Chemical mapping of a 177-nucleotide RNA with DMS and 2A3. The RNA was probed in 150 mM KOAc, 10 mM MgCl2 and 150 mM bicine (pH 8.5) at 24 C.
[RMDB]
RNA sequence: GGGAACGACUCGAGUAGAGUCGAAAAACACCUUUGUGUUUCCCAGUAAUUCUGCCUGGCGUUGCCGUGGCUCCUCGUUCGGAUCGGCUUUCCGCUGCCUUCCGCUGGAUGACGACGGGUUAUCCGGAUACGCUUAUAAAUUCGUUUAUAAGCGUAUAAAAGAAACAACAACAACAAC
Reactivity to DMS in 0.01 (KOAc 150mM, MgCl2 10mM, bicine 150mM(pH8.5), 24C), signal-to-noise 9, nucleotides 027 to 126: a030c030a020c010c300u010u010u030g020u000g000u000u000u000c000c000c000a170g010u030a070a090u020u010c080u010g010c030c020u010g000g010c040g010u010u010g010c030c020g010u000g010g010c030u000c030c020u000c060g010u010u010c030g000g000a070u000c100g010g000c040u010u010u010c050c050g010c060u000g000c050c020u000u000c020c020g010c050u000g000g000a040u010g000a040c030g000a120c130g010g010g000u000u000a040u000c020c010g010g000
Reactivity to 2A3 in 0.01 (KOAc 150mM, MgCl2 10mM, bicine 150mM(pH8.5), 24C), signal-to-noise 9, nucleotides 027 to 126: a000c030a040c030c050u080u100u300g050u010g000u010u020u010c000c000c000a010g040u070a010a170u110u060c050u070g030c010c010u030g030g000c050g130u090u140g020c010c020g040u040g030g000c010u020c000c010u040c020g090u100u060c020g030g020a070u030c040g020g000c010u040u060u030c030c030g040c060u030g010c000c000u030u020c010c010g010c020u030g010g010a030u030g020a020c050g030a030c060g160g040g000u040u040a030u020c010c000g000g000